This 177-nucleotide RNA was probed chemically with DMS and 2A3.
2A3 adducts were read by reverse transcription with SuperScript II with manganese.
For 2A3, 3,950 sequencing reads were counted.
Reactivities are given for positions 27 through 126.
For DMS, 4,401 sequencing reads were counted.
[RMDB]
RNA sequence: GGGAACGACUCGAGUAGAGUCGAAAAUUACAUCGGGCUGACCUAGGGUGAGGUCUAUCACCGGUUUCCGUUUAGCCUCGGAAGCCAACUGCGCAAAUGCCAUUGUGGUGGCGCCGCUAGAGCUGUCCUGUAAACAGGGUUUCGACCCUGUUUACAGAAAAGAAACAACAACAACAAC
Reactivity to DMS in 0.01 (KOAc 150mM, MgCl2 10mM, bicine 150mM(pH8.5), 24C), signal-to-noise 4, nucleotides 027 to 126: u000u010a070c130a090u000c120g010g000g000c030u000g000a060c040c040u000a060g010g030g010u000g020a050g010g000u000c170u000a070u010c030a030c050c070g000g000u000u000u000c010c020g020u000u000u010a170g010c150c200u000c020g000g010a040a010g000c020c010a070a090c140u000g000c050g020c060a120a100a130u000g010c020c030a170u010u000g030u010g020g040u000g010g000c040g000c020c110g010c040u000a030g000a090g020c030u000g010u000c070
Reactivity to 2A3 in 0.01 (KOAc 150mM, MgCl2 10mM, bicine 150mM(pH8.5), 24C), signal-to-noise 3, nucleotides 027 to 126: u120u060a050c020a090u060c080g020g000g000c030u040g050a090c010c000u050a060g100g010g000u030g050a050g000g090u050c080u110a080u030c020a040c050c000g020g000u000u010u010c000c000g000u010u030u080a050g020c000c010u020c020g000g000a010a010g000c010c000a040a060c050u110g000c020g000c070a140a170a230u230g030c020c000a070u080u290g070u130g100g030u010g040g000c050g010c000c000g020c020u060a030g020a020g040c030u030g020u030c020